[RMDB]
RNA sequence: GGGAACGACUCGAGUAGAGUCGAAAACACGCGGUGUCCUGGGGAUUGUUGGUGGUCGGACGGCUUCAGAUGGCUUCGAGAUCGUAGUGUCCGCACCGACUCGUAGUAGACCCGAAUCUCCACAUUGGGUUAUCAUUACUUUCGAGUAAUGAUAACCAAAAGAAACAACAACAACAAC
Reactivity to DMS in 0.01 (KOAc 150mM, MgCl2 10mM, bicine 150mM(pH8.5), 24C), signal-to-noise 5, nucleotides 027 to 126: c110a110c090g010c080g000g000u020g030u000c020c030u010g000g000g000g010a080u010u030g000u000u000g000g020u010g000g010u020c040g000g010a110c040g010g010c040u000u010c070a120g030a050u020g010g010c090u020u000c120g000a100g000a090u000c010g010u020a040g010u000g010u010c020c060g000c040a030c020c000g000a020c010u010c060g000u000a050g020u020a080g000a110c090c010c070g000a090a050u000c010u000c000c020a090c100a110u020u010g010
Reactivity to 2A3 in 0.01 (KOAc 150mM, MgCl2 10mM, bicine 150mM(pH8.5), 24C), signal-to-noise 9, nucleotides 027 to 126: c080a010c020g110c040g040g020u070g020u100c010c030u050g000g010g010g010a090u070u130g050u030u050g030g020u070g010g110u170c000g010g020a010c020g060g020c010u070u050c030a080g010a120u080g100g050c050u120u110c150g140a190g040a140u030c010g030u040a050g010u000g010u020c010c020g010c010a010c000c010g010a010c000u000c030g040u030a070g030u030a030g050a040c000c000c010g010a020a050u020c030u010c030c010a060c020a130u090u230g080
This 177-nucleotide RNA was probed chemically with DMS and 2A3. The RNA was probed in 150 mM KOAc, 10 mM MgCl2 and 150 mM bicine (pH 8.5) at 24 C. Values cover nucleotides 27 to 126.